[RMDB]
RNA sequence: GGGAACGACUCGAGUAGAGUCGAAAAGCGAUGCCGCCAGGAUGGCUUGCUUGCCGAACGUGUCAAUGGCUGCGGUCACGGCGGCCUCGGCGUCAUACAGCGCCGACGUCGUCACCAAGAGUUGGGCGUUGUCCAUGCUCUUCGGAGCAUGGACAACAAAAGAAACAACAACAACAAC
Reactivity to DMS in 0.01 (KOAc 150mM, MgCl2 10mM, bicine 150mM(pH8.5), 24C), signal-to-noise 1, nucleotides 027 to 126: g000c000g010a030u030g030c040c000g000c060c000a020g130g060a300u000g000g040c000u000u040g000c080u050u020g050c020c000g000a090a070c060g000u050g010u030c140a090a020u000g000g030c030u000g000c000g000g060u000c090a000c100g030g000c000g070g020c000c060u000c000g000g010c000g070u000c000a180u030a080c300a200g000c100g000c010c010g030a090c300g000u000c000g000u000c020a270c080c000a090a080g000a100g000u000u050g000g000g000c020
Reactivity to 2A3 in 0.01 (KOAc 150mM, MgCl2 10mM, bicine 150mM(pH8.5), 24C), signal-to-noise 1, nucleotides 027 to 126: g080c020g000a000u080g030c000c000g080c000c020a150g130g070a240u060g000g010c010u070u300g000c020u030u100g000c000c000g080a110a070c220g120u260g150u280c040a050a140u190g070g030c000u000g040c010g000g020u000c000a000c010g000g010c020g010g000c000c000u030c000g080g020c000g000u040c000a020u160a180c000a040g000c010g020c020c000g000a020c000g010u000c000g010u020c000a060c040c030a100a040g090a000g110u030u020g020g000g000c040

An RNA of 177 nucleotides, treated with DMS and 2A3 and read out base by base. For DMS, 915 sequencing reads were counted. DMS adducts were read by reverse transcription with MarathonRT. The RNA was probed in 150 mM KOAc, 10 mM MgCl2 and 150 mM bicine (pH 8.5) at 24 C.